[RMDB]
RNA sequence: GGGAACGACUCGAGUAGAGUCGAAAAGAUAUGGAUACGUGAGGAGCAACAGCGUUUGAUCGGAAACGAUCGGAACGACAUGCUCCUCAUCCUAAGUCAAAGUAUAGACUGUUCGCAGUCUAUACAACCAUUAAUACUAGUUCGCUAGUAUUAAUGGAAAAGAAACAACAACAACAAC
Reactivity to 2A3 in 0.01 (KOAc 150mM, MgCl2 10mM, bicine 150mM(pH8.5), 24C), signal-to-noise 9, nucleotides 027 to 126: g020a010u080a020u160g040g010a040u080a230c250g160u160g050a010g010g010a000g010c030a060a210c110a220g060c020g010u000u020u040g010a000u000c000g010g010a050a040a040c010g000a000u000c040g050g030a010a000c010g090a080c040a020u080g000c000u000c000c000u000c000a000u010c000c000u000a030a010g020u000c080a220a060a040g000u000a000u000a000g000a000c000u010g040u050u070c300g000c160a000g000u000c000u000a000u000a000c000a000a000
Reactivity to DMS in 0.01 (KOAc 150mM, MgCl2 10mM, bicine 150mM(pH8.5), 24C), signal-to-noise 9, nucleotides 027 to 126: g010a060u010a270u010g000g010a150u010a080c300g020u010g010a020g000g000a010g020c000a040a080c210a170g000c010g010u000u000u000g010a010u000c000g000g000a090a070a150c000g010a000u000c000g020g020a000a010c000g000a070c110a240u000g000c000u000c000c000u000c000a000u000c010c010u000a070a160g010u000c050a080a090a140g000u000a000u000a000g000a010c000u000g010u000u010c220g020c000a010g010u000c000u000a000u000a000c000a090a130